An RNA of 177 nucleotides, treated with 2A3 and DMS and read out base by base. The reactions ran in a buffer of 150 mM KOAc, 10 mM MgCl2 and 150 mM bicine (pH 8.5), at 24 C. It was measured as part of the RMDB library RFMREP. For 2A3 the reverse transcriptase was SuperScript II with manganese.
[RMDB]
RNA sequence: GGGAACGACUCGAGUAGAGUCGAAAAGGCGAAGCUUCGGCUUCGCCAAAAUAGCCGUGUUUGGGACCCGUGAAGCGACCGGGUCAACCACUCGCUGCUACCAAACUCCAACUCUUCGGAGUUGGAGGUUAAAUCGGAUGUUCGCAUCCGAUUUAACAAAAGAAACAACAACAACAAC
Reactivity to 2A3 in 0.01 (KOAc 150mM, MgCl2 10mM, bicine 150mM(pH8.5), 24C), signal-to-noise 2, nucleotides 027 to 126: g020g010c000g020a010a000g020c060u160u160c300g040g020c000u010u010c000g000c000c000a010a000a000a000u010a000g020c010c010g030u010g030u000u010u010g000g010g030a010c000c030c040g010u110g060a160a060g190c120g120a030c070c000g000g000g000u010c010a020a060c000c000a010c010u000c010g030c020u010g000c000u050a100c000c020a120a030a050c000u000c000c000a000a000c010u000c010u070u080c240g120g010a010g010u000u010g010g000a010g020
Reactivity to DMS in 0.01 (KOAc 150mM, MgCl2 10mM, bicine 150mM(pH8.5), 24C), signal-to-noise 2, nucleotides 027 to 126: g040g000c010g000a030a020g020c020u000u020c170g030g010c000u000u030c010g030c000c030a000a010a060a150u000a020g040c000c130g010u000g010u000u000u000g020g000g010a050c000c000c010g000u000g020a230a160g030c250g010a170c240c020g020g000g000u000c010a010a080c000c010a020c010u000c020g040c000u000g030c020u000a060c050c040a040a070a290c000u000c000c000a000a000c000u000c000u000u000c160g020g000a040g010u000u010g000g000a020g000